[RMDB]
RNA sequence: GGGAACGACUCGAGUAGAGUCGAAAACCCAGUUCCGGGGCCGUUCACUGGAUCCGAAGCCUCUAGAAGGAUAAUAAAGGCACUCCAUACCCUACUCCGACUCAAUACGUCCCCGUCGUACAGAAUGCAAGGGCAUCCCUGUUCGCAGGGAUGCCAAGGACUCAUAAAUGUUCGCAUUUAUGAGUCCAAAAGAAACAACAACAACAAC
Reactivity to 2A3 in 0.01 (KOAc 150mM, MgCl2 10mM, bicine 150mM(pH8.5), 24C), signal-to-noise 1, nucleotides 027 to 156: c000c000c000a010g050u140u130c040c000g000g000g000g040c010c000g040u110u130c090a090c080u030g000g000a060u040c000c000g050a010a030g010c020c000u010c020u150a160g100a190a060g250g050a090u120a130a040u110a130a180a060g000g000c060a010c070u120c040c000a060u040a170c020c000c000u080a100c030u040c060c010g080a060c010u010c130a050a060u050a090c010g000u030c020c030c040c000g040u070c000g000u030a050c000a050g100a220a030u120g060c070a060a050g120g000g010c000a000u000c000c000c000u040g020u100u050c180g000c040a000g000g000g000a000u000g000c000c000a000a000